This 207-nucleotide RNA was probed chemically with 2A3 and DMS. Reactivities are given for positions 27 through 156. The reactions ran in a buffer of 150 mM KOAc, 10 mM MgCl2 and 150 mM bicine (pH 8.5), at 24 C. For DMS the reverse transcriptase was MarathonRT. The 2A3 profile rests on 5,549 reads. Reactivities are rounded to 0.1 and cut off at 0 and 3. For 2A3 the reverse transcriptase was SuperScript II with manganese.
RNA sequence: GGGAACGACUCGAGUAGAGUCGAAAAUCAACACUGCAAACAGGGAUGGCAGUUCUUGAAUACACAGGAGAGUGCAUUAGCCAGUGGUGCCCGGCAUCAUUCAGAGUGCAGUUUGGCAUCAGGAAUGUUCCGUCAGGUAUUUGUGGUCUUGUGGAGACGUUAGUGUUAACUUCGGUUAACACUAACGAAAAGAAACAACAACAACAAC
Reactivity to 2A3 in 0.01 (KOAc 150mM, MgCl2 10mM, bicine 150mM(pH8.5), 24C), signal-to-noise 6, nucleotides 027 to 156: u080c010a000a040c040a010c060u040g010c030a040a130a110c030a090g010g050g050a050u020g070g000c010a010g020u060u010c030u030u050g050a060a040u130a100c040a030c040a120g060g050a060g030a020g070u070g010c020a050u040u080a040g050c030c030a080g020u040g040g010u030g010c020c070c000g060g010c010a040u030c010a010u070u130c030a040g050a010g190u040g000c020a030g030u100u160u150g060g000c020a020u030c010a010g010g080a040a050u070g030u110u050c030c010g050u040c020a020g020g050u070a060u060u090u090g050u040g000g010u010c020u050u080g020u040g030g030a050g000a020
Reactivity to DMS in 0.01 (KOAc 150mM, MgCl2 10mM, bicine 150mM(pH8.5), 24C), signal-to-noise 3, nucleotides 027 to 156: u000c020a090a090c060a080c010u010g040c050a100a080a140c050a090g020g010g020a120u000g010g040c050a090g020u000u000c040u000u000g010a080a120u000a060c050a080c040a090g020g010a140g010a110g040u000g010c010a100u010u000a130g020c020c040a080g030u010g030g020u000g010c020c020c050g030g010c030a050u000c030a110u010u010c100a130g020a160g000u010g020c000a110g000u000u000u000g010g010c040a060u000c020a110g000g000a060a070u010g010u000u000c030c040g040u000c040a040g030g020u000a080u000u000u000g000u010g010g000u000c060u000u000g010u000g000g010a250g020a150